[RMDB]
RNA sequence: GGGAACGACUCGAGUAGAGUCGAAAAAGCGGUGCUACGGCACCGCAAGGGUCUCUAUACGUUUCAUCGUAAAAGGUUGGUGUCAUUCACCAACCUUUUUUGUUAGGAGCUCAUAUACGUAUGAGCAAAACAGAGUGUUAUUCGUAACACUCUGUUUAAAAGAAACAACAACAACAAC
Reactivity to DMS in 0.01 (KOAc 150mM, MgCl2 10mM, bicine 150mM(pH8.5), 24C), signal-to-noise 7, nucleotides 027 to 126: a080g000c010g020g030u000g020c000u000a090c190g030g010c010a010c000c000g010c010a000a020g010g020g010u000c010u000c010u020a090u020a080c070g010u010u000u000c050a080u010c060g000u000a010a010a000a000g000g010u000u000g010g010u010g000u010c300a160u020u010c010a010c000c000a010a000c000c000u000u000u000u000u000u010g010u000u010a120g000g010a120g020c000u000c000a000u000a040u010a090c170g040u000a010u000g000a010g010c000a060
Reactivity to 2A3 in 0.01 (KOAc 150mM, MgCl2 10mM, bicine 150mM(pH8.5), 24C), signal-to-noise 1, nucleotides 027 to 126: a000g000c000g060g000u000g000c000u070a040c300g030g020c050a020c000c000g000c000a020a000g040g030g020u000c000u000c050u130a140u050a140c080g000u000u090u060c050a110u100c000g000u000a000a000a000a000g000g000u000u050g000g000u050g020u050c130a090u230u170c000a010c000c010a000a000c000c000u100u040u000u000u040u090g010u000u020a080g060g040a130g030c020u000c030a000u000a000u000a010c210g090u070a000u020g000a000g000c000a000